RNA sequence: GGGAACGACUCGAGUAGAGUCGAAAAAUGCAGCGACGGCCGCCGCGGAGCUCCGAGCAGCGGUAGCGCCCCCCUGUAAAGCGGUUCGCUAUGCCGGGGCCACUGUGAACCCUGCCGCCUGCCGGAAUCAAUCAGUCUAGUUCGCUAGACUGAUUGAAAAAGAAACAACAACAACAAC
Reactivity to DMS in 0.01 (KOAc 150mM, MgCl2 10mM, bicine 150mM(pH8.5), 24C), signal-to-noise 1, nucleotides 027 to 126: a050u010g010c070a080g000c010g020a090c110g000g020c040c110g000c050c020g010c060g020g000a200g030c110u000c000c060g000a140g050c010a050g010c040g000g050u020a000g020c090g010c130c040c000c020c050c050u000g000u020a020a100a110g000c060g000g010u000u020c040g010c070u000a110u020g020c040c100g000g000g010g010c080c020a060c020u000g000u010g020a090a100c030c030c010u010g000c020c020g010c090c050u000g000c030c040g000g000a070a150